This 177-nucleotide RNA was probed chemically with 2A3 and DMS.
RNA sequence: GGGAACGACUCGAGUAGAGUCGAAAACGCGGGAAGUUCAUACUCAAAGGAGUGCUGAGGAAAUGAAAAGGCGUCAAGCAGAACUCGCGAAGGAUACCCAACGUAAGUUGGCUGAGGAAGCAAAGGCCAAUGCGAUAUAGUUCGCUAUAUCGCAUUGAAAAGAAACAACAACAACAAC
Reactivity to 2A3 in 0.01 (KOAc 150mM, MgCl2 10mM, bicine 150mM(pH8.5), 24C), signal-to-noise 6, nucleotides 027 to 126: c030g000c010g010g020g040a070a060g030u070u030c020a030u060a090c010u010c030a140a150a070g110g020a100g040u080g010c060u020g010a030g010g080a110a150a100u080g020a040a050a050a080g080g000c010g020u100c080a060a030g000c020a010g030a110a040c020u010c040g000c020g030a030a000g040g000a050u120a140c010c010c010a010a020c030g060u080a010a170g040u040u060g060g000c040u040g030a030g030g080a060a020g030c010a100a040a020g040g000c000
Reactivity to DMS in 0.01 (KOAc 150mM, MgCl2 10mM, bicine 150mM(pH8.5), 24C), signal-to-noise 9, nucleotides 027 to 126: c060g030c030g010g010g020a090a140g010u000u010c030a080u010a110c030u000c030a070a120a130g010g010a060g020u000g010c090u000g010a060g000g000a090a090a050u000g000a050a060a120a120g000g010c030g010u000c160a090a130g010c030a090g010a080a110c030u000c030g010c030g000a090a090g010g000a110u000a100c110c010c010a040a070c090g000u020a050a090g000u010u000g000g010c060u000g000a110g010g010a100a070g000c060a050a060a130g000g000c120
The reactions ran in a buffer of 150 mM KOAc, 10 mM MgCl2 and 150 mM bicine (pH 8.5), at 24 C. For 2A3, 9,910 sequencing reads were counted.